[RMDB]
RNA sequence: GGGAACGACUCGAGUAGAGUCGAAAACUGUUAUAGAGUUCUUCUGAGGAUUCCUCAAGAUAAGAGAAUCUAGGUACAUUUUCCCUUUGUUCUGGAAAAUGACAAAUGGGACAUUCUCAAUUGUAUACAAAAUGGAGGUGUUCGCACCUCCAUUUUGAAAAGAAACAACAACAACAAC
Reactivity to DMS in 0.01 (KOAc 150mM, MgCl2 10mM, bicine 150mM(pH8.5), 24C), signal-to-noise 1, nucleotides 027 to 126: c110u010g020u020u010a200u020a040g000a030g000u000u010c000u000u020c060u000g000a020g000g000a300u010u010c030c020u010c010a040a110g000a110u030a160a080g010a100g010a040a060u000c010u000a040g020g000u010a030c030a020u010u000u000u000c030c000c070u010u010u020g000u020u020c120u000g000g020a120a090a120a110u020g000a000c020a050a040a040u010g020g000g020a100c300a140u010u000c000u000c020a110a120u030u010g020u000a110u000a110